An RNA of 207 nucleotides, treated with 2A3 and read out base by base.
For 2A3 the reverse transcriptase was SuperScript II with manganese.
Reactivities are given for positions 27 through 156.
[RMDB]
RNA sequence: GGGAACGACUCGAGUAGAGUCGAAAAGAUUCGCCGUCGGCAUUUCCCCAGCAGCCAGGACCUACCAGGCUGCGGUGCGGCUCGCCGCACAGGUCAUCCCUCAUCGGGCGCGUCCUGCGUCCUUCCAAAAACUGACUAACCUUCGGGUUAGUCAGAACAAUCACGUAAUCUUCGGAUUACGUGAUUGAAAAGAAACAACAACAACAAC
Reactivity to 2A3 in 0.01 (KOAc 150mM, MgCl2 10mM, bicine 150mM(pH8.5), 24C), signal-to-noise 1, nucleotides 027 to 156: g030a100u090u110c050g000c030c030g130u090c050g040g100c060a140u020u060u080c000c010c010c000a070g000c010a000g000c000c020a070g010g050a060c010c030u160a270c040c020a020g000g000c000u000g000c020g000g030u020g030c020g010g000c080u090c060g100c020c000g000c010a020c000a010g000g020u010c000a080u060c000c020c020u120c030a190u100c030g000g010g000c010g000c010g010u190c040c090u090g000c000g000u000c020c020u040u060c030c010a060a120a020a040a030c000u000g000a000c000u010a000a000c000c010u030u040c130g000g000g020u000u000a000g010u000c000a000g000a000a000